[RMDB]
RNA sequence: GGGAACGACUCGAGUAGAGUCGAAAAACGGUUCGUGGUCGGCGGUCGGGGCGAGGACGGUCUCGGACGCGGUGUGUUCGGGCACCGCUCCAUCGGAUCACAUGUGGCGUCGCCGCGCCCACGGGGAACCGAUAAAUGGAUUCGUCCAUUUAUCGGUAAAAGAAACAACAACAACAAC
Reactivity to 2A3 in 0.01 (KOAc 150mM, MgCl2 10mM, bicine 150mM(pH8.5), 24C), signal-to-noise 9, nucleotides 027 to 126: a000c040g020g040u100u050c000g000u020g010g030u050c060g160g090c020g010g050u200c070g010g010g030g010c030g020a060g070g060a040c090g000g010u000c020u020c010g010g010a040c150g000c020g010g010u030g000u010g020u080u140c110g030g220g000c020a000c010c000g010c010u000c000c000a040u070c050g010g010a020u060c020a020c020a110u190g100u140g270g010c080g300u020c010g000c000c000g000c000g000c000c000c000a000c000g000g010g000g010a010
Reactivity to DMS in 0.01 (KOAc 150mM, MgCl2 10mM, bicine 150mM(pH8.5), 24C), signal-to-noise 8, nucleotides 027 to 126: a110c090g010g010u000u000c030g040u000g000g020u000c040g030g040c020g000g010u010c050g040g000g000g010c010g010a080g010g010a140c210g010g000u000c010u000c140g010g000a030c200g030c010g000g020u000g030u000g000u010u010c200g000g010g010c030a010c010c000g010c030u000c010c010a050u000c230g000g000a040u000c020a130c120a100u010g010u010g010g010c020g010u000c020g010c010c010g010c030g000c300c000c000a050c030g000g010g010g010a130

Structure probing data (2A3 and DMS) for a 177-nucleotide construct. For DMS, 18,788 sequencing reads were counted. DMS adducts were read by reverse transcription with MarathonRT. High 2A3 reactivity points to a flexible backbone, as in loops and unpaired stretches. The RNA was probed in 150 mM KOAc, 10 mM MgCl2 and 150 mM bicine (pH 8.5) at 24 C. The 2A3 profile rests on 24,616 reads.